[RMDB]
Structure probing data (2A3) for a 207-nucleotide construct.

RNA sequence: GGGAACGACUCGAGUAGAGUCGAAAAAGGGAUGCCAGAAGGACUGUUUAAGAAGCUGAAAAUAGAGAAAUGAAUUUAUCUUCUCAUAGUUAGGCAGGGCACAGUAGAAGGAUGCUUAACAUUGCAAGCUGAUGGGAACAGCAGGUUGAUAUAGCUACACCUCCAGUCGAUUCGUCGACUGGAGGUGAAAAGAAACAACAACAACAAC
Reactivity to 2A3 in 0.01 (KOAc 150mM, MgCl2 10mM, bicine 150mM(pH8.5), 24C), signal-to-noise 2, nucleotides 027 to 156: a010g010g000g010a010u040g030c050c010a030g040a030a010g030g000a050c060u030g050u030u130u000a150a070g100a020a000g030c010u040g070a040a080a090a110u130a020g000a010g040a020a000a070u120g050a060a080u090u200u120a100u180c070u030u000c000u040c020a060u060a020g060u080u050a030g020g040c040a000g020g000g000c020a000c000a010g050u090a010g000a000a020g050g020a030u040g000c000u080u050a010a070c050a160u090u240g010c030a030a010g000c030u030g000a050u040g020g030g010a020a030c000a000g030c000a000g080g000u020u010g020a070u030a030u020a200g030c020u040a020
2A3 adducts were read by reverse transcription with SuperScript II with manganese.